Chemical mapping of a 177-nucleotide RNA with DMS and 2A3. The reactions ran in a buffer of 150 mM KOAc, 10 mM MgCl2 and 150 mM bicine (pH 8.5), at 24 C. High DMS reactivity at an A or C suggests that its Watson-Crick edge is free. The 2A3 profile rests on 1,852 reads.
RNA sequence: GGGAACGACUCGAGUAGAGUCGAAAAUGUCGCAGGUCGUGCCGGGAUUCACUACUCUGCGGUGCGCCGCUACUUCACCUCGCACAAAGAAGUGCUGCUGCACCUCGCCGCCGAGGGUUGGGCGCGGUCUUACGACGGUCUUCGGACCGUCGUAAGAAAAAGAAACAACAACAACAAC
Reactivity to DMS in 0.01 (KOAc 150mM, MgCl2 10mM, bicine 150mM(pH8.5), 24C), signal-to-noise 2, nucleotides 027 to 126: u000g020u030c000g000c050a120g070g000u030c030g020u020g000c000c000g000g010g010a070u030u000c180a080c020u050a100c110u000c000u040g000c090g010g000u010g040c100g030c070c030g000c030u030a100c070u000u000c000a120c060c000u000c030g080c020a080c080a160a080a190g030a080a020g000u000g030c030u040g020c130u050g000c010a120c010c000u000c000g020c120c020g000c250c090g000a020g020g000g000u000u000g000g000g020c100g000c000g010g080
Reactivity to 2A3 in 0.01 (KOAc 150mM, MgCl2 10mM, bicine 150mM(pH8.5), 24C), signal-to-noise 3, nucleotides 027 to 126: u200g010u010c010g000c030a060g000g010u050c000g000u040g020c030c000g020g030g020a080u170u090c030a030c080u130a100c060u140c000u110g130c000g020g000u060g010c010g020c020c020g010c020u070a080c020u050u030c090a120c060c000u010c050g060c050a060c030a070a170a020g020a100a000g040u010g000c030u020g100c050u120g000c000a030c000c010u020c030g050c040c020g030c020c010g050a040g040g040g000u050u030g070g020g000c080g000c020g010g020